Chemical mapping of a 177-nucleotide RNA with DMS. For DMS, 1,353 sequencing reads were counted.
[RMDB]
RNA sequence: GGGAACGACUCGAGUAGAGUCGAAAACACAGGACUGGCUAACACCGCAUCAGCCCUUACAGCGGUUGUGCAGAGGCUUGAAAAGGUAGUUCCUGGGCUUGAGAAGAACUACACAGUGGAUGGAAUGAUCUGCAUUCAACUUCGGUUGAAUGCAGAUAAAAGAAACAACAACAACAAC
Reactivity to DMS in 0.01 (KOAc 150mM, MgCl2 10mM, bicine 150mM(pH8.5), 24C), signal-to-noise 2, nucleotides 027 to 126: c050a090c070a090g000g000a050c030u020g040g000c090u000a080a050c120a070c050c030g000c050a140u000c100a080g040c040c020c030u000u020a060c300a170g000c020g000g000u020u000g020u000g010c100a000g020a250g020g020c030u000u000g000a050a030a120a070g000g020u000a010g000u010u010c000c040u000g000g020g000c060u000u020g000a120g000a010a120g000a030a060c020u000a060c040a070c050a060g010u000g020g000a100u000g020g010a110a060u010g000